Record summary: Chemical mapping of a 177-nucleotide RNA with DMS and 2A3. Values cover nucleotides 27 to 126. Values are in units of 0.01, from 0 to 300, in steps of 10. For 2A3, 761 sequencing reads were counted. For DMS, 839 sequencing reads were counted. The data come from the RNA Mapping Database (RMDB), library OK2TRN. DMS (dimethyl sulfate) methylates the pairing face of unpaired adenines and cytosines. The reactions ran in a buffer of 150 mM KOAc, 10 mM MgCl2 and 150 mM bicine (pH 8.5), at 24 C.

RNA sequence: GGGAACGACUCGAGUAGAGUCGAAAAAUCGCGUAUGCGAGAGUAGUGCCAACAUAUUGUGCUCUUUGAUUUUUUGGCAACCCAAAAUGGUGGCGGAUGAACGAGAUGAUAAUAUAUUCAAGUUGCCCCCACUGUUCACAUUCGUGUGAACAGUGGGAAAAGAAACAACAACAACAAC
Reactivity to DMS in 0.01 (KOAc 150mM, MgCl2 10mM, bicine 150mM(pH8.5), 24C), signal-to-noise 1, nucleotides 027 to 126: a070u000c000g030c030g010u020a020u010g020c040g010a050g000a150g030u010a050g000u010g000c040c010a030a060c080a060u000a080u010u000g020u020g000c050u010c060u000u010u000g000a000u000u020u020u020u000u000g010g000c050a070a160c030c010c010a050a040a060a100u000g020g020u000g020g010c010g010g000a090u010g010a050a040c140g000a180g020a040u000g010a040u000a060a110u000a060u000a080u000u000c050a030a180g010u000u000g000c050c040
Reactivity to 2A3 in 0.01 (KOAc 150mM, MgCl2 10mM, bicine 150mM(pH8.5), 24C), signal-to-noise 1, nucleotides 027 to 126: a000u030c020g020c000g100u300a080u300g000c010g010a050g000a000g070u140a000g040u000g040c010c000a010a000c010a040u200a090u030u090g010u100g060c040u000c100u120u180u100g050a050u060u070u020u050u020u020g050g020c000a030a090c000c000c000a000a080a030a050u090g000g010u010g000g000c010g000g070a090u070g040a080a000c060g000a010g000a130u110g010a000u050a300a000u110a040u030a010u060u080c000a010a010g010u020u040g100c000c010